[RMDB]
RNA sequence: GGGAACGACUCGAGUAGAGUCGAAAAGUGUGCUAUACUAGUAAGGUUGAAUGAAUCAACCCUUGGUGCUUAGCUUCUUUGACCAAGCAUAUUACACGCGGAUAACCGCCAAAGGAGAAAAGAUGAACUGCCCGACGAUUCUUCGGAAUCGUCGGAAGCCUUGAACAUUCUUCGGAAUGUUCAAGGCAAAAGAAACAACAACAACAAC
Reactivity to 2A3 in 0.01 (KOAc 150mM, MgCl2 10mM, bicine 150mM(pH8.5), 24C), signal-to-noise 2, nucleotides 027 to 156: g020u050g000u010g040c060u090a090u050a290c030u050a050g150u090a120a090g000g030u000u030g040a080a150u120g070a100a190u050c000a010a010c000c000c000u000u020g000g000u060g070c070u040u040a010g040c000u090u060c020u050u010u040g020a010c040c000a020a010g010c030a060u040a060u190u160a110c080a010c060g000c000g000g050a080u050a180a130c000c010g000c050c020a020a060a030g030g030a030g030a000a160a040a040g050a000u080g060a080a090c070u040g000c030c000c000g000a000c000g000a000u020u000c000u010u050c080g020g000a000a000u010c000g000u000c000g000g000a000a000